[RMDB]
RNA sequence: GGGAACGACUCGAGUAGAGUCGAAAAUUAAGUGCCUGCUCUGUGCCUAUCUGGGGCUGGGGACAGUGCAGUGACCGAGUUAGCCUCAGGUCCUGCCUGCAUCGGCCUCACAGUCCAGUUGGAGAGACAGACUUGUCACCAUGCAGUGAGGACCCAGCUACUAUCUCCCAUUCGUGGGAGAUAGUAGAAAAGAAACAACAACAACAAC
Reactivity to 2A3 in 0.01 (KOAc 150mM, MgCl2 10mM, bicine 150mM(pH8.5), 24C), signal-to-noise 3, nucleotides 027 to 156: u160u060a150a010g040u010g110c000c000u000g020c050u010c010u020g140u070g080c010c000u070a090u080c040u070g020g020g030g000c030u030g030g020g000g040a040c010a000g040u050g140c010a000g010u060g130a000c030c010g000a020g020u070u170a030g090c020c000u030c040a060g020g010u010c010c000u020g080c000c010u010g010c040a070u090c060g080g000c030c000u010c000a030c000a010g020u030c040c010a020g030u040u060g050g040a120g020a010g010a060c000a010g020a050c020u090u090g060u120c030a030c070c020a060u150g050c060a030g050u080g120a030g000g030a010c020c020c000a010g040
Reactivity to DMS in 0.01 (KOAc 150mM, MgCl2 10mM, bicine 150mM(pH8.5), 24C), signal-to-noise 1, nucleotides 027 to 156: u010u010a040a080g010u000g020c030c030u000g020c040u000c020u000g010u020g040c020c000u010a110u000c040u010g000g010g030g010c190u000g000g010g000g000a090c000a040g000u000g030c020a060g020u010g020a010c010c020g010a100g010u000u000a140g040c120c020u080c030a120g060g020u010c010c030u010g030c040c000u000g030c020a100u000c060g000g000c030c010u020c020a080c070a060g000u000c020c030a130g020u000u000g010g010a190g020a240g010a080c020a080g010a010c060u000u000g000u000c050a050c020c030a080u010g000c070a080g010u000g010a090g000g000a210c010c040c020a100g000